Chemical mapping of a 177-nucleotide RNA with DMS. DMS adducts were read by reverse transcription with MarathonRT. Values cover nucleotides 27 to 126.
RNA sequence: GGGAACGACUCGAGUAGAGUCGAAAAGAUAUGGAGGUCUUAAGAUCGAUAAGCUCCCGUCGGAAACGACGGCGAGCUUUUGACGAUCUGAGACCUCCUAAGUCAAAAUCUGGUGUUCGCACCAGAAGACGUAAAGCAUCUUCGGAUGCUUUACGUCAAAAGAAACAACAACAACAAC
Reactivity to DMS in 0.01 (KOAc 150mM, MgCl2 10mM, bicine 150mM(pH8.5), 24C), signal-to-noise 1, nucleotides 027 to 126: g000a020u010a300u000g000g000a010g000g010u010c000u000u000a030a020g010a010u000c000g000a180u010a020a010g000c000u000c010c000c000g000u000c010g000g010a120a070a160c010g010a030c000g010g010c260g020a010g010c000u000u020u000u020g000a170c090g010a030u000c000u000g000a010g000a040c000c000u010c000c000u020a000a080g000u010c020a110a130a130a150u000c040u000g020g020u000g020u010u000c220g110c020a050c020c000a000g000a030a050
The DMS profile rests on 949 reads. It was measured as part of the RMDB library TTRDES.